[RMDB]
About this RNA: An RNA of 177 nucleotides, treated with DMS and 2A3 and read out base by base. Values cover nucleotides 27 to 126. Source: RMDB library M2PK50, as collected in RNAgym. For DMS the reverse transcriptase was MarathonRT. Conditions: 150 mM KOAc, 10 mM MgCl2 and 150 mM bicine (pH 8.5), 24 C.
RNA sequence: GGGAACGACUCGAGUAGAGUCGAAAAGGUCCGCUGUUCGCAGCGGACCAAAUAAAAUCAGCGGUAUCGAGGCGUAAAAUAUUACCGCUGAACGCGUCGAUAAAACCGUGCCGUUCGCGGCACGGAACACCUAGUUUACGUUCGCGUAAACUAGGUGAAAAGAAACAACAACAACAAC
Reactivity to DMS in 0.01 (KOAc 150mM, MgCl2 10mM, bicine 150mM(pH8.5), 24C), signal-to-noise 3, nucleotides 027 to 126: g010g000u000c000c010g030c000u000g020u010u000c170g020c000a010g000c010g010g010a000c000c000a000a040a050u000a080a070a070a100u000c020a000g010c000g000g000u000a020u000c170g000a070g000g020c080g010u000a050a030a080a100u010a080u010u010a030c000c010g020c000u000g000a010a020c110g010c090g020u000c020g000a110u000a050a050a080a130c000c000g000u000g010c000c000g030u010u010c230g030c000g010g020c000a000c010g000g010a030a080
Reactivity to 2A3 in 0.01 (KOAc 150mM, MgCl2 10mM, bicine 150mM(pH8.5), 24C), signal-to-noise 3, nucleotides 027 to 126: g000g000u000c000c000g010c000u020g060u030u070c220g000c090a010g000c000g000g000a000c000c000a000a000a000u010a000a010a000a010u020c010a000g030c010g000g030u010a030u080c070g060a070g080g110c080g090u090a000a100a070a060u200a080u110u060a010c000c000g000c000u010g000a010a010c030g040c040g100u130c030g010a040u090a150a100a050a070c010c000g000u000g010c000c000g020u020u010c240g000c010g030g000c000a000c000g000g000a000a000